Conditions: 150 mM KOAc, 10 mM MgCl2 and 150 mM bicine (pH 8.5), 24 C. Structure probing data (DMS and 2A3) for a 177-nucleotide construct. Values cover nucleotides 27 to 126. For DMS the reverse transcriptase was MarathonRT. The data come from the RNA Mapping Database (RMDB), libraries RFM100 and RFMREP.

RNA sequence: GGGAACGACUCGAGUAGAGUCGAAAAUUGAUGGUCGCCGAGCCAGUCCGUACAUCCAAAAAGGACUCUAUGUAGUAGGAAGUCGAGAGCCUAUGAGAGUUAGAGUCGGUACGAAACAUCUAUUGUCAUUGGCUAGCAAUUUCGAUUGCUAGCCAAUAAAAGAAACAACAACAACAAC
Reactivity to DMS in 0.01 (KOAc 150mM, MgCl2 10mM, bicine 150mM(pH8.5), 24C), signal-to-noise 2, nucleotides 027 to 126: u050u020g000a050u000g000g010u000c010g060c060c060g010a170g030c010c030a030g000u010c030c010g000u000a000c050a100u020c100c180a130a090a080a140a030g000g010a010c000u000c000u020a000u000g010u020a210g020u000a040g000g000a030a030g050u020c230g000a130g000a160g000c000c020u000a010u000g000a180g030a170g000u080u000a030g000a030g000u000c000g000g000u010a030c050g000a090a130a070c110a050u010c100u020a090u010u000g000u010c140
Reactivity to 2A3 in 0.01 (KOAc 150mM, MgCl2 10mM, bicine 150mM(pH8.5), 24C), signal-to-noise 2, nucleotides 027 to 126: u200u030g030a000u080g060g020u110c040g010c060c080g000a010g010c000c000a000g000u050c000c000g020u070a010c020a010u010c170c010a060a050a000a020a020g120g000a040c000u000c000u000a030u060g010u030a060g090u030a040g020g000a050a130g020u060c030g150a000g040a030g230c000c000u010a010u010g070a060g050a070g080u210u070a000g000a000g040u010c030g000g000u050a030c000g010a020a120a000c080a050u130c040u160a180u170u240g050u100c080